RNA sequence: GGGAACGACUCGAGUAGAGUCGAAAACCUGCUUUCCAGUCGCGUGUUGACUCUCGCGCUUCCCCUGCCGCUGCUCUGAGGAUCCGUCUCUGCGCCGCUAGUCGUGCGGACUAAUGGUGCUCUCCAACGCCCUAAGUCUAAUAAAAUCUCCUAGGGACCUCAUGCUAUACUUCGGUAUAGCAUGAGGAAAAGAAACAACAACAACAAC
Reactivity to 2A3 in 0.01 (KOAc 150mM, MgCl2 10mM, bicine 150mM(pH8.5), 24C), signal-to-noise 1, nucleotides 027 to 156: c010c000u070g010c070u000u180u030c050c100a070g030u080c020g000c000g060u080g110u040u170g030a040c060u050c000u050c120g030c000g030c020u050u080c030c010c030c020u040g050c000c000g010c060u030g010c000u040c040u030g030a040g000g010a020u080c030c060g060u030c010u030c030u000g010c040g010c000c000g060c080u030a020g020u040c050g060u100g100c060g040g000a010c000u000a010a030u030g040g000u040g010c000u000c000u010c060c030a100a030c060g030c000c000c000u010a040a070g000u000c030u040a050a050u100a130a160a000a080u030c060u000c020c010u030a060g040g010g050a050

Structure probing data (2A3) for a 207-nucleotide construct. The reactions ran in a buffer of 150 mM KOAc, 10 mM MgCl2 and 150 mM bicine (pH 8.5), at 24 C. 2A3 is a SHAPE reagent: it acylates the 2'-hydroxyl of flexible nucleotides of all four kinds. 2A3 adducts were read by reverse transcription with SuperScript II with manganese. Source: RMDB library VIROID, as collected in RNAgym.